[RMDB]
RNA sequence: GGGAACGACUCGAGUAGAGUCGAAAAGGAGUGGAAGGCGCUGCCCGGGGGGAACCGGAUUUACCUACGGGAAUCCCUGGGUUCCUCUGAUGUCCAGUCCCUCUCCCGUCCGAGUGAAGGGAGACUCAUACACACAACUUCGGUUGUGUGAAAAGAAACAACAACAACAAC
Reactivity to 2A3 in 0.01 (KOAc 150mM, MgCl2 10mM, bicine 150mM(pH8.5), 24C), signal-to-noise 9, nucleotides 027 to 129: g030g000a020g040u110g030g040a180a060g050g010c090g030c200u120g020c000c010c010g000g000g000g000g000g000a020a010c010c000g000g000a010u090u110u240a170c030c030u050a060c040g010g000g040a040a030u040c000c000c000u010g020g000g000u020u010c000c000u010c010u060g110a110u150g130u030c010c000a010g040u000c000c000c000u020c000u010c000c000c000g020u010c020c020g210a140g090u300g070a040a040g010g000g000a000g010a000c000u010c020a070u180a070
Reactivity to DMS in 0.01 (KOAc 150mM, MgCl2 10mM, bicine 150mM(pH8.5), 24C), signal-to-noise 9, nucleotides 027 to 129: g020g020a090g020u020g030g000a070a020g010g030c300g020c140u010g000c020c020c000g010g010g010g000g010g000a260a130c000c000g000g000a040u000u030u050a100c170c120u020a080c040g010g010g010a050a140u050c000c010c040u010g020g000g030u020u010c030c000u020c030u000g000a100u030g010u040c000c010a090g010u030c020c030c020u000c010u010c010c000c010g020u000c000c050g060a100g010u100g010a020a020g000g020g010a000g020a030c070u000c070a120u020a190